[RMDB]
RNA sequence: GGGAACGACUCGAGUAGAGUCGAAAACAACAACUUUCGCUCAAGCACGCCGUAUCGCUGCUGAGAUUGGCUAUCCGGUUUUAGUGAGGCCCUCGUAUGUGCUGGGCGGUCGCGGUAUGGAGAUCGAAAUAUAUUACCAUUUCGAUGGUAAUAUAUUAAAAGAAACAACAACAACAAC
Reactivity to 2A3 in 0.01 (KOAc 150mM, MgCl2 10mM, bicine 150mM(pH8.5), 24C), signal-to-noise 9, nucleotides 027 to 126: c020a000a010c010a020a060c020u060u130u080c040g000c010u020c040a110a040g030c010a010c040g020c010c010g050u070a030u110c040g000c030u060g000c020u030g020a020g010a080u060u080g030g000c050u080a120u200c020c010g040g070u020u030u050u070a070g000u100g300a070g070g020c010c010c000u020c010g080u140a150u260g050u050g010c030u040g010g010g010c020g000g010u030c040g000c040g020g030u070a090u120g060g020a070g020a050u090c060g020a030
Reactivity to DMS in 0.01 (KOAc 150mM, MgCl2 10mM, bicine 150mM(pH8.5), 24C), signal-to-noise 9, nucleotides 027 to 126: c050a090a090c130a080a100c090u000u010u000c030g020c040u000c030a090a090g010c040a050c080g010c140c040g010u000a030u000c090g010c030u000g010c020u000g010a040g010a050u000u000g000g020c230u010a160u010c020c020g010g010u000u000u000u000a040g020u010g010a150g010g010c010c040c040u000c050g010u010a060u010g020u000g010c040u000g000g010g010c020g000g010u000c070g020c100g010g000u000a060u000g010g010a120g010a080u000c080g000a090
The data come from the RNA Mapping Database (RMDB), library OK2TST. An RNA of 177 nucleotides, treated with 2A3 and DMS and read out base by base. For DMS the reverse transcriptase was MarathonRT. The 2A3 profile rests on 28,517 reads. 2A3 adducts were read by reverse transcription with SuperScript II with manganese. The RNA was probed in 150 mM KOAc, 10 mM MgCl2 and 150 mM bicine (pH 8.5) at 24 C.